RNA sequence: GGGAACGACUCGAGUAGAGUCGAAAAACGUUAGCUGAAAAUAUGCAGCCCUUGAGUUUAUAUGGAGUUCUAGACAGAUGGACACAUGUAGGUACUGCCGCUGAGUGGGCAGGUGUAUUACACCUUGCUGGGAGUGAAUGAUGGCUUAUUUGUCAGAGAUACCUGAAAAUUUCGAUUUUCAGGUAUCAAAAGAAACAACAACAACAAC
Reactivity to DMS in 0.01 (KOAc 150mM, MgCl2 10mM, bicine 150mM(pH8.5), 24C), signal-to-noise 2, nucleotides 027 to 156: a060c040g010u000u010a060g020c000u030g000a060a040a090a150u000a060u000g000c030a080g020c000c010c030u000u020g010a110g000u000u010u000a070u000a100u010g010g010a130g030u000u000c020u000a130g020a180c090a120g020a120u010g020g010a060c040a070c040a040u010g020u000a030g000g010u000a080c030u010g010c010c030g030c040u000g020a150g050u000g010g020g040c050a040g000g020u000g040u010a130u010u010a070c040a040c020c000u000u010g020c010u000g000g000g010a110g030u010g010a090a100u010g020a080u000g010g010c030u000u010a120u020u010u000g010u000c010a110g030a300
Reactivity to 2A3 in 0.01 (KOAc 150mM, MgCl2 10mM, bicine 150mM(pH8.5), 24C), signal-to-noise 3, nucleotides 027 to 156: a000c080g010u050u050a010g010c010u030g060a020a070a080a060u150a040u150g040c000a040g000c000c050c000u040u080g070a060g050u120u180u060a120u030a070u120g030g010a120g050u060u040c050u070a020g010a130c040a030g020a060u070g030g040a030c020a000c000a060u040g030u060a020g040g030u080a070c020u050g020c010c010g030c080u050g050a040g070u060g000g010g000c000a000g020g020u010g000u000a110u070u190a030c010a020c020c030u060u130g000c020u030g000g040g000a070g010u070g020a070a060u100g050a010u030g040g000c000u040u020a080u110u070u090g040u020c000a010g050a000